Structure probing data (2A3) for a 207-nucleotide construct. Reactivities are rounded to 0.1 and cut off at 0 and 3. For 2A3 the reverse transcriptase was SuperScript II with manganese.
RNA sequence: GGGAACGACUCGAGUAGAGUCGAAAAGAUCCGAUGCUAGCUACGGGGGGUUCUUUGCUACACGCCAUUAAGCUGCUGGCGGAUCGUGGCGCUACCGAUAUCACCGCUAUUUGUAUGGUGUCGGCGCAGGAGGGUGUUGAUGCCUUGGCUGAGUCGACAGGGGUAAUGCUUUCGAGCAUUACCCCUGAAAAGAAACAACAACAACAAC
Reactivity to 2A3 in 0.01 (KOAc 150mM, MgCl2 10mM, bicine 150mM(pH8.5), 24C), signal-to-noise 1, nucleotides 027 to 156: g040a050u010c000c000g040a010u100g000c080u130a040g010c020u070a020c110g000g000g000g000g010g010u030u040c000u020u140u100g060c040u050a070c080a000c020g080c030c000a030u000u110a040a030g010c020u010g000c020u020g120g020c000g000g000a000u010c010g010u100g040g000c000g010c010u010a040c010c010g030a000u020a000u110c010a020c090c040g080c050u160a230u190u190u170g160u030a120u140g000g000u020g000u000c000g020g030c010g000c010a010g000g040a000g020g060g000u080g030u090u140g060a080u230g010c000c000u040u030g080g020c040u000g000a000g040u030c010g010a010